About this RNA:
Structure probing data (DMS) for a 177-nucleotide construct. For DMS, 4,284 sequencing reads were counted. DMS adducts were read by reverse transcription with MarathonRT. Reactivities are given for positions 27 through 126.
[RMDB]
RNA sequence: GGGAACGACUCGAGUAGAGUCGAAAAGUUUUUAACGCGUGUGCACCCGCUAACACGAAUUACCCAGUUAUUUUGGACUUUACUCGAGUCGUUAUAGCGUGAGUUGGCGGAGUUCUCCGCGAAAUAAUAUUGAGUACUACUUCGGUAGUACUCAAUAAAAAGAAACAACAACAACAAC
Reactivity to DMS in 0.01 (KOAc 150mM, MgCl2 10mM, bicine 150mM(pH8.5), 24C), signal-to-noise 3, nucleotides 027 to 126: g020u010u010u010u000u000a050a070c150g010c030g020u000g020u000g010c050a070c050c030c070g000c030u010a060a050c030a020c030g000a090a070u010u010a110c090c060c040a110g000u000u010a060u000u000u000u000g000g010a010c000u000u000u000a010c010u000c010g000a010g000u000c000g010u000u000a030u010a060g020c040g020u000g010a060g000u000u010g020g000c000g020g000a110g010u010u000c060u000c010c010g020c020g010a010a060a040u010a070a130